[RMDB]
RNA sequence: GGGAACGACUCGAGUAGAGUCGAAAAGAUAUGGAAUUUUCAGAUGUGGAACACCUGGCAACAGCUCGCCUAUCGGAAACGAUAGCGAGACAUGCCAGCGUGUUCCACAUCUGAAAAUUCCUAAGUCCAUAGGACAUUUGUUCGCAAAUGUCCUAUGAAAAGAAACAACAACAACAAC
Reactivity to DMS in 0.01 (KOAc 150mM, MgCl2 10mM, bicine 150mM(pH8.5), 24C), signal-to-noise 3, nucleotides 027 to 126: g010a140u010a300u000g000g010a020a000u000u000u000u000c000a010g000a020u000g040u000g000g000a020a020c000a010c000c000u000g020g010c000a040a120c300a160g010c000u000c000g020c280c050u000a020u000c000g010g010a150a130a280c020g000a010u000a020g000c010g000a010g000a020c110a160u000g000c000c010a000g000c300g000u000g000u000u000c000c000a000c000a000u020c000u000g010a000a000a000a010u000u000c000c010u000a040a080g010u000c030